[RMDB]
RNA sequence: GGGAACGACUCGAGUAGAGUCGAAAAGAUGGAGGGUCGGGCCUCGGACACCUCCUAUAAGAUGUAACUAUUACGAGGCCAUUAAUGGCGUUUUCGCCUAGGUGCACGUCGGCGUGCGUGGCACCGUAAGACUUAAUGAAUAACACGCCGGAUACAACCAUGCGUACUCAUUCGUGAGUACGCAUGGAAAAGAAACAACAACAACAAC
Reactivity to 2A3 in 0.01 (KOAc 150mM, MgCl2 10mM, bicine 150mM(pH8.5), 24C), signal-to-noise 1, nucleotides 027 to 156: g050a050u110g000g000a040g000g060g000u000c060g010g000g010c000c000u000c000g000g000a000c000a150c070c000u000c000c000u030a020u000a050a130g030a000u220g060u150a120a120c130u150a070u140u000a010c010g000a000g000g000c000c000a000u000u050a000a090u070g000g020c000g200u170u120u090u290c040g000c000c000u000a010g000g000u000g000c000a000c000g000u000c010g010g000c000g000u020g030c040g000u050g020g090c000a000c010c000g000u030a120a000g000a000c000u040u260a000a070u220g140a170a020u070a110a000c000a000c000g000c000c050g040g000a030u050a000c040a050a000